[RMDB]
RNA sequence: GGGAACGACUCGAGUAGAGUCGAAAAGCGCGGGGCAACAUGGCGGCCGUACAGGAUCUGUUCACCCAGGCGGCGAUCGCCAAGGCGGCGGUCGAGCUGGCUGCGGUCGAGGAGCCGGUUUACGACGGUAUACCAACGGAUUCGUCCGUUGGUAUACAAAAGAAACAACAACAACAAC
Reactivity to 2A3 in 0.01 (KOAc 150mM, MgCl2 10mM, bicine 150mM(pH8.5), 24C), signal-to-noise 2, nucleotides 027 to 126: g060c050g000c020g040g020g000g010c020a070a020c040a140u060g060g000c010g030g000c030c000g020u030a050c020a050g000g050a060u030c020u100g120u090u060c030a050c030c000c010a020g070g000c000g010g010c020g010a040u040c010g010c020c010a010a020g260g000c080g000g000c030g000g030u000c020g000a060g000c010u050g120g040c000u020g020c060g050g010u050c050g030a040g020g000a010g020c050c000g050g000u020u130u070a050c060g030a030c070g010
Reactivity to DMS in 0.01 (KOAc 150mM, MgCl2 10mM, bicine 150mM(pH8.5), 24C), signal-to-noise 5, nucleotides 027 to 126: g020c060g020c050g020g000g000g020c060a060a070c100a090u000g010g020c060g010g010c020c030g020u020a050c100a130g010g000a070u010c050u010g020u000u000c070a080c040c020c030a110g000g010c020g010g030c020g000a020u000c010g010c010c010a100a160g010g020c190g010g020c000g010g010u010c030g010a110g020c010u000g000g010c030u000g010c130g010g000u000c110g010a080g000g000a080g010c010c010g000g010u010u000u010a040c070g000a140c140g010
Chemical mapping of a 177-nucleotide RNA with 2A3 and DMS. The 2A3 profile rests on 3,247 reads. Reactivities are given for positions 27 through 126. For DMS, 6,585 sequencing reads were counted. The RNA was probed in 150 mM KOAc, 10 mM MgCl2 and 150 mM bicine (pH 8.5) at 24 C.